[RMDB]
RNA sequence: GGGAACGACUCGAGUAGAGUCGAAAAGGGGUCUCUGAGACAAGUCGCAUGUUGUCAGCUUAUGUGGGACUGAAGCCUCCACGGUCCCACUAAGCUUGGAUUUACAUGCGUCACCCUCAGAGACGGAGGCACCCAAACUGCCACUUCGGUGGCAGAAGUUUCACUUAUAGUUCGCUAUAAGUGAAACAAAAGAAACAACAACAACAAC
Reactivity to DMS in 0.01 (KOAc 150mM, MgCl2 10mM, bicine 150mM(pH8.5), 24C), signal-to-noise 1, nucleotides 027 to 156: g040g010g000g020u000c000u000c010u000g000a060g010a070c110a070a120g000u000c000g020c020a020u010g000u000u000g000u000c040a110g010c000u010u030a020u000g010u000g000g020g000a040c010u000g000a090a150g040c020c010u000c020c030a300c010g010g000u000c000c000c000a000c010u000a010a000g000c010u010u000g010g010a080u000u000u000a040c000a030u000g010c030g010u000c050a060c110c060c020u000c000a020g000a070g000a000c040g010g030a060g050g020c020a100c020c000c000a060a080a170c010u000g030c000c000a000c000u000u020c290g010g010u000g000g000c010a000g010a050a150
Reactivity to 2A3 in 0.01 (KOAc 150mM, MgCl2 10mM, bicine 150mM(pH8.5), 24C), signal-to-noise 6, nucleotides 027 to 156: g070g010g050g000u000c000u000c000u010g010a000g010a020c120a200a110g010u020c010g000c000a000u010g010u020u040g080u120c180a090g020c010u080u020a100u300g000u000g010g000g010a000c000u010g010a050a020g010c000c010u000c010c010a030c020g000g000u000c000c010c000a000c000u000a000a000g000c000u040u260g100g000a010u080u080u060a000c000a000u000g000c000g000u030c020a050c010c000c000u000c000a000g000a000g000a000c000g000g000a000g000g000c010a030c000c000c000a020a070a060c010u000g000c000c000a020c020u040u080c300g130g000u000g000g000c000a000g000a020a010
Source information: This 207-nucleotide RNA was probed chemically with DMS and 2A3. The DMS profile rests on 4,608 reads. For 2A3 the reverse transcriptase was SuperScript II with manganese. DMS adducts were read by reverse transcription with MarathonRT. Source: RMDB library RNAMAK, as collected in RNAgym.